[RMDB]
RNA sequence: GGGAACGACUCGAGUAGAGUCGAAAAGGUGCGAUGUUCGCAUCGCACCAAAGAAGCUCAAAUUGACGCAAACAACGGCGUCAGCGUGAGCAAACGCGGAAAAAACCACUUGGUUCGCCAAGUGGAAGAUAGAGGGAACGUUCGCGUUCCCUCUAUCAAAAGAAACAACAACAACAAC
Reactivity to DMS in 0.01 (KOAc 150mM, MgCl2 10mM, bicine 150mM(pH8.5), 24C), signal-to-noise 3, nucleotides 027 to 126: g000g020u000g010c020g030a010u010g000u000u010c210g040c000a020u000c000g010c000a000c000c010a010a050a110g000a120a150g000c000u000c000a010a050a030u000u000g010a010c040g000c010a050a080a070c270a080a160c270g010g000c030g000u000c000a020g010c300g000u000g000a010g030c000a050a050a020c170g010c130g000g000a010a010a060a040a120a070c010c000a010c000u000u000g000g000u000u010c130g010c020c000a010a010g000u010g020g000a010a010
Reactivity to 2A3 in 0.01 (KOAc 150mM, MgCl2 10mM, bicine 150mM(pH8.5), 24C), signal-to-noise 1, nucleotides 027 to 126: g000g000u000g000c000g000a010u010g020u050u030c090g010c070a010u000c010g000c000a010c010c000a000a000a000g000a070a010g000c010u000c010a020a020a040u020u010g000a010c000g010c000a030a220a260c060a150a220c170g070g020c000g000u000c000a000g000c000g010u000g010a000g000c000a010a110a010c120g000c060g070g010a060a040a000a000a010a090c000c010a010c000u000u000g000g040u060u070c200g000c080c000a010a000g000u000g000g000a010a010
An RNA of 177 nucleotides, treated with DMS and 2A3 and read out base by base.
Conditions: 150 mM KOAc, 10 mM MgCl2 and 150 mM bicine (pH 8.5), 24 C.
For 2A3, 3,060 sequencing reads were counted.
Reactivities are rounded to 0.1 and cut off at 0 and 3.